[RMDB]
Background:
An RNA of 177 nucleotides, treated with DMS and 2A3 and read out base by base. For DMS the reverse transcriptase was MarathonRT. The DMS profile rests on 3,167 reads. The reactions ran in a buffer of 150 mM KOAc, 10 mM MgCl2 and 150 mM bicine (pH 8.5), at 24 C.
RNA sequence: GGGAACGACUCGAGUAGAGUCGAAAAAUCUAACCCUGAGCCGUGAAUCCGGCCAGAGGACCGUGUCAGCCGGUCAGUUUUACUGGGGCGGUAUCCUCCCAAAGAGUAACGGAGGAGCGCGAAGGUGCAUUUCUAUACUCUUCGGAGUAUAGAAAUGAAAAGAAACAACAACAACAAC
Reactivity to DMS in 0.01 (KOAc 150mM, MgCl2 10mM, bicine 150mM(pH8.5), 24C), signal-to-noise 4, nucleotides 027 to 126: a050u000c060u010a100a180c030c010c000u010g000a150g000c010c000g010u010g010a180a200u010c260c020g000g020c000c020a050g000a080g000g000a030c030c010g000u010g000u010c050a280g020c040c010g000g010u000c000a140g010u010u010u020u010a040c040u000g010g000g000g000c020g010g010u010a100u010c010c020u000c000c000c110a070a120a100g010a160g000u000a130a130c210g010g000a020g000g010a060g000c030g010c010g010a300a130g010g010u000g010
Reactivity to 2A3 in 0.01 (KOAc 150mM, MgCl2 10mM, bicine 150mM(pH8.5), 24C), signal-to-noise 3, nucleotides 027 to 126: a000u020c040u030a040a030c000c000c000u000g010a000g030c010c000g000u030g120a070a040u030c030c010g020g000c000c000a010g040a100g000g010a010c010c010g020u020g140u080c050a020g060c090c000g020g020u000c010a010g010u040u070u150u130a030c000u030g010g000g100g060c020g050g000u100a140u040c010c020u050c000c000c020a110a180a000g150a040g030u060a070a010c040g010g010a010g020g010a000g030c010g000c010g030a020a020g020g000u040g000